[RMDB]
RNA sequence: GGGAACGACUCGAGUAGAGUCGAAAAGAGCAAAAUAUCACUUGUUCAGCUGUGCUUGCAGCAAGGUCGCAUGUCUGCUGGCCAGGCCCAGUGGUGAUAGGGGCCUGUGUUCACACCAGGGCCAAAAGAGCGCAGUGUAAUUCGUUACACUGCGCUCAAAAGAAACAACAACAACAAC
Reactivity to DMS in 0.01 (KOAc 150mM, MgCl2 10mM, bicine 150mM(pH8.5), 24C), signal-to-noise 1, nucleotides 027 to 126: g010a090g000c050a060a010a140a090u000a020u000c030a010c000u000u000g010u000u000c030a170g000c000u000g020u010g000c050u020u000g000c000a050g000c050a040a060g050g050u010c210g000c110a050u000g010u010c000u000g000c030u000g010g000c020c020a040g000g000c050c000c000a270g000u020g000g030u010g000a010u000a040g000g010g000g040c010c000u060g000u000g020u010u010c290a110c110a100c130c050a120g000g010g010c020c050a060a030a100a070
Reactivity to 2A3 in 0.01 (KOAc 150mM, MgCl2 10mM, bicine 150mM(pH8.5), 24C), signal-to-noise 1, nucleotides 027 to 126: g010a010g000c010a010a030a000a070u040a010u020c010a010c050u020u010g020u070u030c010a030g060c040u030g050u150g020c010u000u060g010c010a020g000c000a030a080g070g070u140c070g040c250a020u060g110u030c020u000g000c000u010g000g010c000c030a030g010g030c030c020c000a070g040u090g140g020u020g030a020u050a090g030g000g030g040c000c000u040g020u050g000u110u150c070a080c000a020c100c000a020g000g050g080c020c000a010a070a030a000